[RMDB]
RNA sequence: GGGAACGACUCGAGUAGAGUCGAAAACAUCGCGCCGUACUCACUACGUGGCCGGACGCAUCCGACCGUCGCGGCGCCACGCACCUGGGCGGAGCUCGACGACCCCGCACUGCGUCAGCUCUCCUACAAGCCUAUAUUAAUUCGUUAAUAUAGGCUUAAAAGAAACAACAACAACAAC
Reactivity to DMS in 0.01 (KOAc 150mM, MgCl2 10mM, bicine 150mM(pH8.5), 24C), signal-to-noise 9, nucleotides 027 to 126: c100a090u000c130g010c050g010c020c010g020u000a070c070u000c080a090c110u010a080c080g020u000g010g020c020c010g010g010a040c180g010c140a110u000c080c080g010a070c140c010g000u000c040g010c030g010g010c080g010c010c040a020c050g010c070a070c080c060u000g000g000g010c100g000g000a040g010c020u000c090g020a040c040g000a120c060c030c010c050g010c090a080c100u000g010c020g010u000c030a060g000c020u000c020u000c020c010u000a080c190
Reactivity to 2A3 in 0.01 (KOAc 150mM, MgCl2 10mM, bicine 150mM(pH8.5), 24C), signal-to-noise 9, nucleotides 027 to 126: c030a070u100c040g000c010g010c020c010g040u080a080c050u060c110a090c120u160a050c090g050u070g010g020c020c010g020g010a020c060g030c120a140u070c040c060g080a100c040c010g080u060c060g010c020g300g000c050g010c000c000a020c020g040c020a060c010c030u020g020g020g000c060g020g010a010g000c030u070c110g040a030c010g050a060c020c010c000c040g060c030a070c070u150g010c010g000u010c000a010g000c000u000c000u000c020c000u100a050c040